[RMDB]
RNA sequence: GGGAACGACUCGAGUAGAGUCGAAAAACGGAUGGUACGCCAUCCGACCAUUGGGUAGAAGCGUUCAAUCAGCACCGUGACGGUGCAGAUGGGAAAUUGCCCAUGAUCCGCACCAUACGUGGUGCGAAAAAGCCAUCGGUGUUCGCACCGAUGGCAAUCAUAGAGCUGCGUUCGCGCAGCUCUAUGAAAAAGAAACAACAACAACAAC
Reactivity to 2A3 in 0.01 (KOAc 150mM, MgCl2 10mM, bicine 150mM(pH8.5), 24C), signal-to-noise 1, nucleotides 027 to 156: a050c010g000g000a000u000g030g000u070a100c210g170c050c000a000u000c000c000g030a030c010c000a090u020u050g010g000g030u030a030g000a140a010g040c040g050u010u030c050a050a030u030c040a050g010c000a000c020c000g130u250g300a180c300g020g000u010g010c020a010g000a000u010g010g040g000a010a180a020u040u010g000c000c000c000a000u060g080a020u050c010c000g000c000a010c000c000a010u020a130c290g070u010g000g000u000g010c000g000a010a040a000a000a000g030c020c000a030u000c010g000g030u040g020u010u060c190g050c210a040c000c000g000a000u000g000g000c000a000a000